[RMDB]
RNA sequence: GGGAACGACUCGAGUAGAGUCGAAAACUGCAAUUCGUUGCAGCAAGAAGGGGUCGGUCCAACAGCGUUUAGCGAAGAACGUACUGAAGCCUCCACGGUACGGGAGCUGACGACAUGGACCGACGGAGGCACCCAACUCACGGUGUUCGCACCGUAAGACCGUGUUAUAAUUCGUUAUAACACGGUCAAAAGAAACAACAACAACAAC
Reactivity to DMS in 0.01 (KOAc 150mM, MgCl2 10mM, bicine 150mM(pH8.5), 24C), signal-to-noise 4, nucleotides 027 to 156: c010u010g000c010a020a070u000u040c300g050u000u000g020c000a020g010c020a060a120g020a140a120g010g000g030g020u010c000g010g000u000c000c000a040a130c100a170g020c030g020u000u000u000a060g040c000g010a100a130g030a190a190c000g010u000a040c020u000g000a070a080g010c030c020u000c010c020a300c060g000g000u000a070c000g000g010g010a170g030c010u000g010a100c050g000a090c070a300u010g010g040a030c000c020g000a020c030g000g010a070g080g030c020a230c000c010c010a120a140c130u010c120a040c000g000g000u000g000u000u000c130g010c020a040c010c000g010u010a060a250
Reactivity to 2A3 in 0.01 (KOAc 150mM, MgCl2 10mM, bicine 150mM(pH8.5), 24C), signal-to-noise 9, nucleotides 027 to 156: c000u000g000c000a010a030u090u080c250g100u130u040g000c000a010g030c090a090a060g150a110a070g060g030g030g000u010c010g000g000u000c010c010a040a040c090a120g230c030g070u150u250u300a010g000c010g030a060a010g020a080a020c000g000u000a000c010u020g050a130a030g020c000c010u010c010c000a010c010g000g000u000a000c000g010g000g020a020g000c010u020g020a030c040g020a050c030a090u090g000g000a000c000c000g000a000c000g000g000a000g000g000c010a030c000c010c010a050a080c050u130c110a020c010g020g000u040g020u070u060c140g030c080a000c010c000g010u020a030a030
This 207-nucleotide RNA was probed chemically with DMS and 2A3. The reactions ran in a buffer of 150 mM KOAc, 10 mM MgCl2 and 150 mM bicine (pH 8.5), at 24 C. For DMS, 8,298 sequencing reads were counted. The 2A3 profile rests on 24,639 reads. For DMS the reverse transcriptase was MarathonRT.